[RMDB]
Record summary:
This 177-nucleotide RNA was probed chemically with DMS and 2A3.
RNA sequence: GGGAACGACUCGAGUAGAGUCGAAAACGCAGAAGCCUGAGGCGUAAGCUCGGGUGGAGCCGUCGGUAACGAAUAUCCUGGCGGUAGUAGCAGCAUAGUCGGGUGAGAAUCCCGACCGCCGGAAGGGACAGGGCUAUAAGUUCGCUUAUAGCCCUGUAAAAGAAACAACAACAACAAC
Reactivity to DMS in 0.01 (KOAc 150mM, MgCl2 10mM, bicine 150mM(pH8.5), 24C), signal-to-noise 6, nucleotides 027 to 126: c080g020c040a090g000a210a210g000c010c000u010g000a100g010g010c030g010u060a110a110g000c020u000c020g000g010g010u020g010g000a180g000c000c020g010u010c000g000g000u010a100a080c220g030a150a100u030a080u010c070c010u020g000g000c000g000g020u010a040g010u020a090g000c060a090g000c110a100u030a090g000u010c000g000g010g010u000g000a200g000a230a130u020c000c000c000g010a010c010c060g000c010c020g000g010a110a060g010g010g010
Reactivity to 2A3 in 0.01 (KOAc 150mM, MgCl2 10mM, bicine 150mM(pH8.5), 24C), signal-to-noise 5, nucleotides 027 to 126: c060g020c030a050g030a130a010g040c000c010u080g000a050g090g050c020g070u130a090a070g010c010u020c030g040g000g030u060g000g010a010g010c000c000g010u020c010g000g020u070a090a050c090g070a190a090u070a050u230c020c030u070g010g010c010g020g000u030a020g010u050a010g050c070a000g000c020a050u050a070g000u010c000g030g000g000u010g000a030g020a020a030u020c000c010c000g000a000c000c000g020c000c000g050g060a060a040g090g000g000
The reactions ran in a buffer of 150 mM KOAc, 10 mM MgCl2 and 150 mM bicine (pH 8.5), at 24 C.